[RMDB]
RNA sequence: GGGAACGACUCGAGUAGAGUCGAAAACUGCAGGUCAACGGAAUUUCUUCAGAUCAGCUAUUGCAGAAGAAAGGUCAGCCAAGCGCUCUGGGCCAGUUCGACUGUAUAUAGGAGCUUCUGAUUUCAACCAGAAGCUAACUCUCUCCGAAACAAUGAGCCCUUUUAGGUAUUUCGAUACCUAAAAGGGAAAAGAAACAACAACAACAAC
Reactivity to DMS in 0.01 (KOAc 150mM, MgCl2 10mM, bicine 150mM(pH8.5), 24C), signal-to-noise 2, nucleotides 027 to 156: c030u000g000c020a070g020g010u000c030a120a120c110g000g010a070a120u000u000u000c050u000u000c020a100g020a110u010c040a130g020c020u000a040u000u000g020c020a150g020a070a270g020a060a090a120g030g020u000c020a070g040c010c070a160a120g030c070g010c040u020c070u030g000g010g050c040c010a100g020u000u000c030g000a170c030u000g000u010a060u020a110u000a070g020g020a080g000c000u000u000c000u000g000a100u010u000u000c180a080a020c030c000a010g010a030a020g020c020u000a030a070c040u000c050u000c070u010c010c040g060a180a130a100c090a070a060u000g000a130g000
Reactivity to 2A3 in 0.01 (KOAc 150mM, MgCl2 10mM, bicine 150mM(pH8.5), 24C), signal-to-noise 5, nucleotides 027 to 156: c030u040g020c020a030g020g050u060c040a040a050c070g060g050a080a040u090u070u060c030u080u060c050a040g010a180u040c040a030g070c030u090a050u160u140g000c020a010g000a050a000g020a000a040a010g010g000u030c010a010g000c030c020a200a050g040c060g010c070u030c050u070g020g030g020c010c000a040g030u020u040c020g010a010c020u000g050u040a050u010a010u040a170g120g020a010g020c000u010u000c000u000g070a130u130u270u280c070a060a050c030c000a000g000a010a000g000c000u010a050a040c010u020c010u000c000u000c030c030g040a070a060a060c060a060a160u150g040a080g010